[RMDB]
RNA sequence: GGGAACGACUCGAGUAGAGUCGAAAAACAAUAAACAGUCAUGAGACAUCCAUAUAUGAUUUCUCUACAGCCGUCAUCAACAAAUGUCUCUGACCUACGAAGCAAAGCUAAACCCUUUUCCAUAAAUCCUGCUCGUAUGUAGACCAAUCCUGGAAAACCUAAUAUACCCAUUCGUGGGUAUAUUAGGAAAAGAAACAACAACAACAAC
Reactivity to DMS in 0.01 (KOAc 150mM, MgCl2 10mM, bicine 150mM(pH8.5), 24C), signal-to-noise 2, nucleotides 027 to 156: a050c030a060a090u010a050a070a170c080a030g000u000c010a080u010g010a080g020a050c000a020u000c020c050a140u000a180u000a070u000g000a050u000u000u010c020u000c030u000a110c120a130g000c050c060g040u000c030a070u010c060a080a120c110a080a070a050u000g010u000c010u000c020u010g020a020c010c030u000a090c070g000a080a120g000c040a070a100a020g010c050u010a030a030a100c040c020c020u000u000u000u000c000c030a100u010a060a050a090u000c010c000u000g020c020u000c060g010u000a040u000g010u010a130g010a090c030c050a090a130u010c050c020u020g000g010a080a060a090a220
Reactivity to 2A3 in 0.01 (KOAc 150mM, MgCl2 10mM, bicine 150mM(pH8.5), 24C), signal-to-noise 7, nucleotides 027 to 156: a000c060a030a080u190a120a100a030c040a030g020u020c010a030u220g000a010g000a010c010a010u020c080c030a050u110a020u040a040u230g020a070u030u130u030c070u020c070u190a110c080a080g040c050c050g040u030c020a040u020c010a030a090c020a080a130a020u030g000u000c000u000c010u010g010a010c020c010u080a040c050g100a060a000g030c040a110a040a000g010c020u090a050a080a110c010c000c020u020u030u050u010c030c010a040u080a110a070a040u050c010c010u030g010c010u020c020g040u100a060u160g060u060a010g030a040c040c010a040a040u100c010c050u090g040g060a020a160a080a020